[RMDB]
Structure probing data (2A3) for a 207-nucleotide construct. Conditions: 150 mM KOAc, 10 mM MgCl2 and 150 mM bicine (pH 8.5), 24 C. For 2A3 the reverse transcriptase was SuperScript II with manganese. The data come from the RNA Mapping Database (RMDB), library OK3TST.
RNA sequence: GGGAACGACUCGAGUAGAGUCGAAAAUGCUUAUAUCUUGCUAAAGAAUUCUUUGCCAGGCACGUUGGCUCCCACCUGUAAUCCUACCACUUUGGGAGGGUAAAGCGGGAGGAUCAUUCAAGGCCAAGAGUUUAAAACCAGCCUGGGCAACAUAAUGCGAUAACAGGUGGUUCGCCACCUGUUAUCGAAAAGAAACAACAACAACAAC
Reactivity to 2A3 in 0.01 (KOAc 150mM, MgCl2 10mM, bicine 150mM(pH8.5), 24C), signal-to-noise 1, nucleotides 027 to 156: u050g000c030u190u020a040u170a160u300c000u000u200g000c030u120a140a000a020g080a120a120u160u000c020u000u070u030g010c000c000a000g030g040c000a010c070g060u010u000g000g000c000u010c010c000c000a100c020c000u020g010u020a050a000u000c000c010u000a120c020c040a110c020u140u150u110g000g080g000a180g000g040g000u100a090a080a000g000c020g000g000g040a050g000g030a040u100c000a030u140u090c030a040a010g020g000c070c000a070a010g020a010g000u000u130u180a030a060a000a000c040c000a050g000c000c000u000g070g020g000c000a000a000c000a060u210a150a030u300g050